[RMDB]
RNA sequence: GGGAACGACUCGAGUAGAGUCGAAAAGAUAUGGAGACCACCAUAGCAACAGCUAUAUCUCGGAAACGAGAUGAUAGACAUGCUAUGUGGUCUCCUAAGUCAAAACCGCGAGGUUCGCCUCGCGGAACUCAUGCAGAGACUUCGGUCUCUGCAUGAGAAAAGAAACAACAACAACAAC
Reactivity to 2A3 in 0.01 (KOAc 150mM, MgCl2 10mM, bicine 150mM(pH8.5), 24C), signal-to-noise 1, nucleotides 027 to 126: g010a000u020a000u070g000g010a010g010a010c000c000a000c060c110a020u010a000g000c110a080a200c070a200g000c000u040a010u000a000u000c000u010c010g020g010a030a000a010c000g000a000g010a000u000g030a010u000a010g020a040c130a260u300g010c010u020a010u010g010u000g010g000u000c000u000c000c000u000a000a000g000u000c000a000a020a080a190c000c020g000c000g000a000g080g010u160u240c300g170c020c000u000c010g000c000g010g020a000a000
Reactivity to DMS in 0.01 (KOAc 150mM, MgCl2 10mM, bicine 150mM(pH8.5), 24C), signal-to-noise 1, nucleotides 027 to 126: g000a020u000a140u000g000g040a020g050a020c010c000a000c300c300a020u000a020g030c010a130a050c300a210g020c010u000a000u000a010u000c000u000c000g000g010a040a040a040c000g000a000g000a010u000g000a020u000a010g000a030c030a300u020g010c000u010a010u010g020u000g010g010u000c000u020c000c000u000a010a080g000u000c020a050a100a090a090c040c010g010c010g000a020g010g000u000u020c250g030c000c010u020c000g000c000g000g000a030a050